[RMDB]
This 177-nucleotide RNA was probed chemically with 2A3 and DMS. For 2A3 the reverse transcriptase was SuperScript II with manganese. DMS adducts were read by reverse transcription with MarathonRT. It was measured as part of the RMDB library OK2TST. For DMS, 5,231 sequencing reads were counted.

RNA sequence: GGGAACGACUCGAGUAGAGUCGAAAAGGACAGGCCGUCCAGGGUCAGGUCGAUAGUUUGUGACAUAAAACACUCCUUUAAGACAGUUUUGACUGGCUGUGAUAAAGGUUAAACCUUCCAGCAAGGGGCUGCAUUAUUAGUUCGCUAAUAAUGCAGCAAAAGAAACAACAACAACAAC
Reactivity to 2A3 in 0.01 (KOAc 150mM, MgCl2 10mM, bicine 150mM(pH8.5), 24C), signal-to-noise 3, nucleotides 027 to 126: g050g010a010c030a040g070g000c030c020g040u070c050c030a020g040g010g020u070c020a030g000g050u040c040g060a070u090a120g100u040u060u120g080u040g050a040c060a120u170a080a080a040a010c030a020c040u040c000c000u030u020u050a060a020g110a020c020a000g010u030u020u100u180g120a090c080u060g030g030c010u020g000u020g060a040u090a090a020a010g020g000u010u090a040a090a040c000c010u040u020c020c040a030g000c050a020a030g090g000g050
Reactivity to DMS in 0.01 (KOAc 150mM, MgCl2 10mM, bicine 150mM(pH8.5), 24C), signal-to-noise 6, nucleotides 027 to 126: g010g000a050c070a120g020g010c060c060g010u000c060c090a130g000g000g010u000c060a060g000g010u000c040g020a100u000a070g010u010u010u000g010u000g010a110c090a110u010a060a070a080a050c110a140c150u000c010c000u000u000u000a030a110g000a040c020a030g010u000u000u010u010g020a120c210u010g000g010c000u000g010u000g010a160u000a020a010a010g000g010u000u010a060a090a230c040c020u000u000c020c070a080g000c090a070a030g000g000g000